[RMDB]
RNA sequence: GGGAACGACUCGAGUAGAGUCGAAAAGUACUAUGCCCGCCAUUAUUGAUGCAUGCUCCACCUCCCACUCCUUAAUAGUUGCUUUGAAGUUUCCUUUGGGUGGGUUCUGCAGCGUCUUUAUCAGAAACAUUACUUUUGAAUUCGUUCAAAAGUAAUGAAAAGAAACAACAACAACAAC
Reactivity to 2A3 in 0.01 (KOAc 150mM, MgCl2 10mM, bicine 150mM(pH8.5), 24C), signal-to-noise 4, nucleotides 027 to 126: g040u030a070c030u090a070u170g040c000c000c030g040c060c030a130u150u140a040u050u160g030a010u040g000c150a130u020g000c010u050c060c010a050c020c020u020c000c020c000a020c030u110c000c010u070u080a050a030u050a170g070u020u080g010c020u170u090u140g100a150a030g040u070u090u050c010c000u060u100u040g020g000g000u030g000g000g000u060u050c050u040g020c000a020g030c000g050u000c000u030u110u040a120u050c040a000g150a040a090a000
Reactivity to DMS in 0.01 (KOAc 150mM, MgCl2 10mM, bicine 150mM(pH8.5), 24C), signal-to-noise 8, nucleotides 027 to 126: g010u000a070c100u010a080u000g010c030c020c020g020c140c120a080u010u000a050u010u000g000a060u000g010c050a080u000g010c020u000c080c030a050c060c040u000c010c010c000a070c070u000c050c080u000u000a060a080u000a090g010u000u000g010c040u000u000u000g010a070a170g010u000u000u000c020c020u000u000u000g010g010g030u000g000g000g000u000u010c070u010g010c070a060g020c030g020u000c020u000u000u010a040u010c080a090g010a160a080a150